[RMDB]
RNA sequence: GGGAACGACUCGAGUAGAGUCGAAAAUGUCCUCGUGCGACACCUGGGCCGCCAGCUCGUCGCACACCCCCAGGUGCGCCGUGGUUUCGGUGAUGACGGAACGCAGGCUCGCGAGGGACGCGACCAGGGCCUGACAAGCAUUCGUGCUUGUCAGGCCAAAAGAAACAACAACAACAAC
Reactivity to 2A3 in 0.01 (KOAc 150mM, MgCl2 10mM, bicine 150mM(pH8.5), 24C), signal-to-noise 1, nucleotides 027 to 126: u160g010u000c000c000u000c030g060u110g000c050g030a080c000a070c030c000u080g000g040g030c030c120g030c040c030a040g000c030u130c070g190u050c100g050c040a020c010a000c020c000c040c000c010a030g030g010u000g000c000g000c020c020g070u150g040g040u000u010u000c030g000g060u210g030a220u160g060a010c000g020g000a040a000c000g030c120a010g000g030c020u040c010g020c070g040a110g000g020g010a020c000g010c010g060a030c000c000a000g000